[RMDB]
RNA sequence: GGGAACGACUCGAGUAGAGUCGAAAAAGCGUAUCGUUGCACUUGUCUGGUGGGAUUGUGGCAUUAAUUUGCCUGCUCAUCUAGGCAGUGGACAUAUGCUCAACACUGGGUAUAAUUCUAAUUGAAUGUAGUCUUUAGUUCGCUAAAGACAAAAGAAACAACAACAACAAC
Reactivity to 2A3 in 0.01 (KOAc 150mM, MgCl2 10mM, bicine 150mM(pH8.5), 24C), signal-to-noise 9, nucleotides 027 to 129: a000g000c010g000u010a000u040c100g010u010u130g300c010a010c030u160u150g010u000c000u000g000g010u020g020g010g020a070u140u230g110u100g110g000c000a000u000u090a070a100u070u100u020g000c000c000u010g000c010u000c000a040u020c020u010a010g000g000c000a000g000u000g000g000a000c000a000u000a000u000g000c000u020c010a090a060c080a020c090u120g090g000g060u120a120u080a210a150u130u050c060u100a120a180u120u170g060a060a040u120g030u130a040
Reactivity to DMS in 0.01 (KOAc 150mM, MgCl2 10mM, bicine 150mM(pH8.5), 24C), signal-to-noise 5, nucleotides 027 to 129: a020g000c000g000u020a050u020c170g020u000u020g080c000a000c000u040u040g060u010c010u000g000g050u000g000g000g000a040u050u090g060u030g000g030c010a030u030u000a090a130u070u030u000g000c000c000u000g000c000u010c020a000u040c020u040a030g000g000c010a000g040u000g000g020a010c000a040u000a000u000g020c020u000c060a110a080c070a080c070u040g020g000g030u000a030u040a110a090u040u020c040u040a060a130u040u030g000a050a030u000g000u000a040

The data come from the RNA Mapping Database (RMDB), library 15KLIB.
Structure probing data (2A3 and DMS) for a 170-nucleotide construct.
For DMS the reverse transcriptase was MarathonRT.